[RMDB]
RNA sequence: GGGAACGACUCGAGUAGAGUCGAAAAAGAAAGAGAGCGUAGCACACACACAGACUAAGUCUGACACUCACCUACGCUACAUGUGUGUGUGAAGUCGAGAUAUCGACAAGUGUGUGUGAUGAAAAAACACCACUACUCAGUUCGCUGAGUAGUGGUGAAAAGAAACAACAACAACAAC
Reactivity to 2A3 in 0.01 (KOAc 150mM, MgCl2 10mM, bicine 150mM(pH8.5), 24C), signal-to-noise 3, nucleotides 027 to 126: a000g090a030a060a000g120a010g010a020g080c020g010u030a000g020c010a000c000a000c000a000c010a010c000a000g010a030c040u160a220a030g010u010c000u000g000a010c000a000c020u010c000a000c010c010u010a000c020g040c060u060a050c040a060u040g040u000g000u020g000u000g000u000g030a030a010g000u000c010g030a000g030a130u200a030u160c020g000a020c020a070a120g000u000g020u000g010u000g010u020g010a040u050g080a030a080a000a020a020a000
Reactivity to DMS in 0.01 (KOAc 150mM, MgCl2 10mM, bicine 150mM(pH8.5), 24C), signal-to-noise 3, nucleotides 027 to 126: a080g010a070a040a080g010a030g000a070g030c040g010u000a030g010c010a010c000a000c000a000c000a030c000a020g000a010c010u010a130a120g010u000c000u000g000a060c000a020c020u000c020a010c000c000u000a010c020g010c180u000a040c120a040u000g010u010g020u000g000u000g010u000g000a010a090g000u000c000g010a020g010a170u010a080u000c010g010a010c000a040a030g000u010g020u000g010u000g010u000g020a080u000g000a010a050a040a070a060a120